[RMDB]
RNA sequence: GGGAACGACUCGAGUAGAGUCGAAAAUUUACGCUGGAAGUGGAAUACAAUGACCCCACAUACUGGUUUCCAGCAGUAGCAAGAUGUCCUAUUAACAUUACUCUGGUUGAUUUCACUGAACCAAAAUGUAUUCUGGGAUGCACUGUUGAAGACCAUGCUCUAACUACACAUUCGUGUGUAGUUAGAGAAAAGAAACAACAACAACAAC
Reactivity to DMS in 0.01 (KOAc 150mM, MgCl2 10mM, bicine 150mM(pH8.5), 24C), signal-to-noise 3, nucleotides 027 to 156: u000u010u010a070c050g060c040u000g000g000a080a140g030u010g020g020a140a140u010a110c060a100a130u000g010a210c060c020c000c010a040c050a160u000a090c110u000g010g020u000u000u000c020c010a040g020c000a030g020u000a090g040c090a070a090g010a140u000g000u000c010c010u020a110u000u000a030a050c020a030u000u000a060c090u000c090u000g020g000u000u010g020a180u000u010u010c110a140c160u010g010a040a060c050c030a030a070a050a050u010g020u000a090u000u010c130u010g010g000g040a090u000g030c030a050c020u000g020u000u000g010a020a040g010a040c010c010a080u010g010
Reactivity to 2A3 in 0.01 (KOAc 150mM, MgCl2 10mM, bicine 150mM(pH8.5), 24C), signal-to-noise 7, nucleotides 027 to 156: u050u040u070a080c070g010c060u090g070g070a120a060g040u020g030g080a140a080u190a150c090a120a140u180g070a140c030c040c080c010a030c020a020u240a070c070u050g000g020u010u010u010c010c010a000g000c010a010g010u050a060g000c060a090a060g050a300u160g040u050c000c000u010a030u050u050a030a020c010a020u020u070a070c060u100c100u120g010g030u020u020g100a220u100u280u280c170a120c140u140g090a020a020c000c000a000a000a000a100u030g000u030a300u070u050c030u040g000g010g000a000u040g000c010a000c010u000g000u020u010g010a030a000g010a000c000c020a020u110g010
Overview: Chemical mapping of a 207-nucleotide RNA with DMS and 2A3. Conditions: 150 mM KOAc, 10 mM MgCl2 and 150 mM bicine (pH 8.5), 24 C. For DMS, 6,563 sequencing reads were counted. Source: RMDB library OK3TST, as collected in RNAgym.